[RMDB]
The record gives the reactivity of an RNA of 177 nucleotides to 2A3 and DMS. For 2A3, 3,977 sequencing reads were counted. Conditions: 150 mM KOAc, 10 mM MgCl2 and 150 mM bicine (pH 8.5), 24 C. DMS adducts were read by reverse transcription with MarathonRT. The DMS profile rests on 3,743 reads.
RNA sequence: GGGAACGACUCGAGUAGAGUCGAAAAGAUAUGGACACUCCCACGACAUGCCAAGGUUCGGAAACGAACCAUUGGCAACAGCGUGGAGUGUCCUAAGUCAAAAGGCGACACCUUCGGGUGUCGCCAACUUAUUCUUGCAGUUCGCUGCAAGAAUAAGAAAAGAAACAACAACAACAAC
Reactivity to 2A3 in 0.01 (KOAc 150mM, MgCl2 10mM, bicine 150mM(pH8.5), 24C), signal-to-noise 2, nucleotides 027 to 126: g020a010u010a000u030g020g020a000c010a000c020u120c120c210c040a020c070g060a040c070a190u140g010c000c000a030a020g000g040u020u010c020g000g000a030a010a000c030g020a000a000c000c020a170u020u000g010g060c010a030a010c050a040g010c000g010u000g000g010a000g020u010g010u000c000c010u010a020a010g020u010c000a000a010a070a300g020g010c020g000a000c000a000c030c070u100u200c300g110g000g000u000g000u010c000g020c000c000a020a000
Reactivity to DMS in 0.01 (KOAc 150mM, MgCl2 10mM, bicine 150mM(pH8.5), 24C), signal-to-noise 2, nucleotides 027 to 126: g010a010u000a120u020g000g000a000c000a000c010u000c220c060c070a020c000g010a080c140a100u010g010c000c010a020a020g000g000u000u000c000g020g020a030a030a050c000g010a000a000c010c000a060u000u000g000g000c010a020a030c220a200g000c010g030u000g000g010a040g000u000g020u000c010c000u000a000a070g010u000c000a080a120a180a130g010g010c000g000a030c000a010c000c000u010u020c260g020g010g070u000g020u000c000g030c000c000a010a010